Conditions: 150 mM KOAc, 10 mM MgCl2 and 150 mM bicine (pH 8.5), 24 C.
This 170-nucleotide RNA was probed chemically with 2A3 and DMS.
For DMS, 25,145 sequencing reads were counted.
For DMS the reverse transcriptase was MarathonRT.
It was measured as part of the RMDB library 15KLIB.
As a SHAPE reagent, 2A3 marks flexible, mostly unpaired nucleotides at the ribose 2'-OH.
RNA sequence: GGGAACGACUCGAGUAGAGUCGAAAAAGUACACUUAGGAUUACUAGAACUCUGUCAACUCAGUACUGCCGGUUCGGUAGUUGUGAGUAUGCACAAGAGGGUGUUUGUAUUACCACAAAUGGCUCGUAUACCGACAUGUUCGCAUGUCGGAAAAGAAACAACAACAACAAC
Reactivity to 2A3 in 0.01 (KOAc 150mM, MgCl2 10mM, bicine 150mM(pH8.5), 24C), signal-to-noise 8, nucleotides 027 to 129: a010g070u050a030c070a000c040u070u130a030g020g060a060u060u030a070c020u040a040g070a120a040c000u010c010u020g010u020c000a000a000c010u000c000a000g060u030a000c000u000g030c010c000g290g060u200u300c090g020g000u010a000g000u000u000g210u000g040a000g020u030a230u020g040c090a000c010a130a020g000a020g060g020g000u070g060u030u080u040g020u000a050u010u110a140c020c020a040c020a030a060a020u080g070g000c020u010c080g040u090a040u040a200
Reactivity to DMS in 0.01 (KOAc 150mM, MgCl2 10mM, bicine 150mM(pH8.5), 24C), signal-to-noise 6, nucleotides 027 to 129: a090g000u000a050c080a030c130u010u050a040g010g030a130u040u050a070c040u000a100g020a140a110c000u020c040u000g020u020c020a030a030c010u000c020a000g000u050a000c020u000g040c040c030g040g020u040u060c020g010g040u010a010g010u020u050g030u030g020a000g050u020a080u020g060c160a040c010a060a030g030a040g000g010g000u000g030u000u000u000g020u010a050u020u040a070c060c040a100c090a070a070a080u030g040g000c000u010c040g040u000a110u030a090